[RMDB]
RNA sequence: GGGAACGACUCGAGUAGAGUCGAAAAAUUUGGAUUUAAUCCCUGAGUGAAGAUUGCAGUCGUAAAGUAAAAGGACGGUCCAGGCACUUGCGCUUUUUUGCCUGCAAAGAAUUCCGGUUUGCCGGUUAACAAUUUGACAUUUCGAUGUCAAAUUGUUAAAAGAAACAACAACAACAAC
Reactivity to DMS in 0.01 (KOAc 150mM, MgCl2 10mM, bicine 150mM(pH8.5), 24C), signal-to-noise 3, nucleotides 027 to 126: a050u020u040u000g020g000a100u040u020u010a090a090u010c000c000c030u000g000a120g020u020g010a130a080g000a140u010u020g010c030a020g020u000c050g010u010a030a020a070g010u010a040a170a070a040g000g020a070c040g000g010u030c020c070a110g000g020c090a060c040u000u010g000c190g000c020u000u010u010u030u010u010g000c040c020u000g010c050a010a040a080g010a100a090u010u010c010c000g010g000u040u030u010g040c030c010g000g000u010u010
Reactivity to 2A3 in 0.01 (KOAc 150mM, MgCl2 10mM, bicine 150mM(pH8.5), 24C), signal-to-noise 3, nucleotides 027 to 126: a000u150u170u300g100g020a070u080u110u080a060a040u040c000c000c040u020g030a000g080u110g020a070a070g110a200u010u070g020c030a010g020u060c030g040u070a040a010a070g020u020a000a060a070a100g080g030a020c020g040g050u060c060c020a050g040g000c180a010c090u040u130g050c040g030c040u060u070u030u000u110u200g020c010c000u010g000c000a010a000a070g040a000a030u140u040c020c000g000g090u070u070u140g130c000c000g000g000u000u010
This 177-nucleotide RNA was probed chemically with DMS and 2A3. The reactions ran in a buffer of 150 mM KOAc, 10 mM MgCl2 and 150 mM bicine (pH 8.5), at 24 C. It was measured as part of the RMDB libraries RFM100 and RFMREP.